[RMDB]
RNA sequence: GGGAACGACUCGAGUAGAGUCGAAAAUCAAACUCCGAAUACCGUGCAAUGGAACGUGGCAGUGAGACAGUGGGGGAUAAGCUUCAUUGUCGAGAGGGAAACAACCCAGAUCAGCAGCUAAGGUGCCGCAUUACACAACCUUCGGGUUGUGUAAUGCAAAAGAAACAACAACAACAAC
Reactivity to DMS in 0.01 (KOAc 150mM, MgCl2 10mM, bicine 150mM(pH8.5), 24C), signal-to-noise 2, nucleotides 027 to 126: u000c090a050a180a030c060u030c000c030g010a230a110u030a100c100c040g030u000g000c060a100a070u000g000g000a040a100c050g040u000g000g000c030a050g010u000g000a270g000a010c000a010g020u000g000g000g000g000g040a100u020a080a220g000c070u000u000c020a030u030u000g020u000c050g000a090g000a140g000g000g000a030a160a010c280a100a180c030c000c050a060g000a100u020c170a050g020c010a080g000c070u020a050a090g000g000u000g050c110c010
Reactivity to 2A3 in 0.01 (KOAc 150mM, MgCl2 10mM, bicine 150mM(pH8.5), 24C), signal-to-noise 3, nucleotides 027 to 126: u110c040a050a100a020c010u080c010c060g050a070a000u050a090c010c050g020u010g070c110a070a080u090g020g090a080a040c010g060u030g030g010c030a060g020u050g100a030g000a050c000a000g020u020g000g000g040g010g020a090u070a120a110g090c000u030u030c010a050u010u010g040u020c010g000a030g050a010g090g010g040a040a110a060c070a030a030c000c000c000a000g010a090u070c020a030g040c000a000g000c000u050a190a010g000g030u050g050c020c020